The record gives the reactivity of an RNA of 207 nucleotides to DMS and 2A3.
The 2A3 profile rests on 1,350 reads.
The DMS profile rests on 3,814 reads.
The RNA was probed in 150 mM KOAc, 10 mM MgCl2 and 150 mM bicine (pH 8.5) at 24 C.

[RMDB]
RNA sequence: GGGAACGACUCGAGUAGAGUCGAAAAAGUCAAAGUUAUCUCAGAGUCAAGGGCCUAUUUAGGGUCUUACACUUUAAACACUGAAAUUUGGUUUCCCCUAGUUCUCUUCUUCAUGCAAGGAUGGAAAACCAGAGGAAUAGAGGUGGCGUCUACGCAAACUAGAACUCAGAUUCGUCUGAGUUCUAGUAAAAGAAACAACAACAACAAC
Reactivity to DMS in 0.01 (KOAc 150mM, MgCl2 10mM, bicine 150mM(pH8.5), 24C), signal-to-noise 2, nucleotides 027 to 156: a060g000u000c020a070a110a120g010u000u000a060u010c020u010c050a160g020a070g040u000c030a210a240g000g010g010c000c000u000a110u000u000u000a180g000g050g030u000c010u020u000a070c080a010c020u020u000u000a040a090a120c050a130c080u000g000a060a060a080u000u000u000g010g020u000u000u000c010c000c010c070u000a050g020u010u000c010u010c020u000u000c010u000u000c020a090u010g030c070a080a130g020g000a060u010g010g000a020a020a040a030c030c030a050g000a050g010g020a060a100u010a060g000a150g020g040u000g010g000c010g000u000c020u000a080c040g020c080a050a140
Reactivity to 2A3 in 0.01 (KOAc 150mM, MgCl2 10mM, bicine 150mM(pH8.5), 24C), signal-to-noise 3, nucleotides 027 to 156: a010g050u040c020a020a040a000g040u090u090a150u100c050u020c050a030g010a010g040u050c070a040a130g030g010g010c000c000u100a180u160u250u260a080g100g000g020u020c010u000u050a010c000a000c010u080u090u200a070a120a030c060a010c030u060g030a090a110a130u060u090u070g020g000u020u040u000c000c000c010c010u010a020g030u170u080c010u000c010u110u000c010u040u040c000a040u100g040c040a020a070g040g020a010u110g040g020a030a040a030a060c010c010a040g030a050g070g050a080a020u050a090g050a010g010g030u040g000g030c010g030u010c070u050a030c040g030c090a010a130